Source: RMDB library OK2TST, as collected in RNAgym. The record gives the reactivity of an RNA of 177 nucleotides to 2A3 and DMS. 2A3 adducts were read by reverse transcription with SuperScript II with manganese. Reactivities are given for positions 27 through 126. For DMS the reverse transcriptase was MarathonRT. The reactions ran in a buffer of 150 mM KOAc, 10 mM MgCl2 and 150 mM bicine (pH 8.5), at 24 C. For 2A3, 10,329 sequencing reads were counted.
RNA sequence: GGGAACGACUCGAGUAGAGUCGAAAACAUGGCGGUCAAACUAUUCUGAGUACUGGAAUAACCGGAGAUGACGCUCGCUUAGCGAAAGCAGUAUGCGAUUCUGGUGUUAAAUUGUUAGAACCGAAUCCAUAUGUGUCCAUUUCGAUGGACACAUAUGAAAAGAAACAACAACAACAAC
Reactivity to 2A3 in 0.01 (KOAc 150mM, MgCl2 10mM, bicine 150mM(pH8.5), 24C), signal-to-noise 4, nucleotides 027 to 126: c040a050u100g120g000c010g010g000u040c040a060a030a070c060u070a060u080u040c050u070g060a040g110u090a100c080u090g020g040a060a030u060a080a040c020c040g040g030a070g010a050u100g060a020c030g000c020u010c040g020c030u110u110a050g040c030g110a080a020a000g000c010a020g030u130a050u140g040c030g010a000u030u000c020u060g010g020u020g040u090u150a070a170a130u110u060g040u050u050a040g020a070a010c010c010g010a010a020u030c010
Reactivity to DMS in 0.01 (KOAc 150mM, MgCl2 10mM, bicine 150mM(pH8.5), 24C), signal-to-noise 9, nucleotides 027 to 126: c090a080u000g010g020c020g020g000u000c070a130a080a090c090u000a040u000u000c040u000g010a170g020u010a070c130u000g010g010a060a050u000a090a090c070c030g000g010a070g010a090u000g010a110c070g000c050u000c140g010c030u000u000a090g020c050g010a080a090a090g010c020a080g010u000a060u010g000c060g000a080u000u000c010u000g020g010u000g010u000u000a040a060a110u000u000g010u000u000a110g000a120a080c020c010g010a060a090u010c050